Chemical mapping of a 177-nucleotide RNA with DMS. The data come from the RNA Mapping Database (RMDB), library OK2TST. Conditions: 150 mM KOAc, 10 mM MgCl2 and 150 mM bicine (pH 8.5), 24 C.
RNA sequence: GGGAACGACUCGAGUAGAGUCGAAAAGUUGACCAUCGUGACAGCGUGCUGAGCGCGGACGAGCGUGCGCUGAACACGCGCAUGAUGGCGUGCUGCUCGCGCGCGAGGCACGGACGGCUCGUGCUCACAGCCCUCCUCAGUUCGCUGAGGAGGGCUGAAAAGAAACAACAACAACAAC
Reactivity to DMS in 0.01 (KOAc 150mM, MgCl2 10mM, bicine 150mM(pH8.5), 24C), signal-to-noise 1, nucleotides 027 to 126: g030u000u000g000a070c050c030a060u000c070g010u000g000a090c060a070g020c000g050u000g000c000u010g000a300g010c000g010c010g010g010a160c030g030a050g030c050g000u000g000c020g010c030u030g010a080a170c100a050c100g000c080g050c080a080u000g030a180u010g030g010c020g050u000g000c050u020g060c020u000c000g000c000g000c000g040c020g000a300g000g010c000a000c000g010g000a070c090g010g000c050u000c010g000u000g030c070u000c030a180